Structure probing data (2A3 and DMS) for a 177-nucleotide construct. The RNA was probed in 150 mM KOAc, 10 mM MgCl2 and 150 mM bicine (pH 8.5) at 24 C. As a SHAPE reagent, 2A3 marks flexible, mostly unpaired nucleotides at the ribose 2'-OH. It was measured as part of the RMDB library M2PK50.
RNA sequence: GGGAACGACUCGAGUAGAGUCGAAAACUGUGCAUGUUCGCAUGCACAGAAAUGCGUCACAGGCGAUUGACGCAAUAAUUAUGAUGGUAGGAUCGCCUCUGAAAAGCGGGUCCUUCGGGACCCGCAACUUAUAGCGCAGAUUCGUCUGCGCUAUAAGAAAAGAAACAACAACAACAAC
Reactivity to 2A3 in 0.01 (KOAc 150mM, MgCl2 10mM, bicine 150mM(pH8.5), 24C), signal-to-noise 2, nucleotides 027 to 126: c000u000g000u010g000c010a020u010g010u060u090c170g030c090a010u010g040c000a000c000a010g000a000a010a020u060g010c000g000u010c010a020c030a060g040g000c020g050a030u010u040g010a000c010g010c040a010a060u080a040a020u120u230a090u200g170a040u110g100g100u090a080g060g030a000u030c000g030c060c000u000c100u060g090a030a040a010a080g000c000g030g030g000u010c020c000u060u070c190g020g010g000a030c010c000c000g000c000a000a000
Reactivity to DMS in 0.01 (KOAc 150mM, MgCl2 10mM, bicine 150mM(pH8.5), 24C), signal-to-noise 3, nucleotides 027 to 126: c000u000g010u000g010c000a010u010g000u010u010c210g040c000a010u000g000c000a010c000a000g000a030a090a110u010g000c020g010u000c000a040c120a080g010g010c000g000a020u000u000g000a020c010g000c000a040a060u010a060a080u020u010a080u010g010a070u010g010g000u000a080g000g010a020u000c000g000c010c000u000c300u000g000a080a060a110a130g010c010g000g000g010u000c000c000u000u000c160g020g020g000a020c010c000c000g000c010a000a010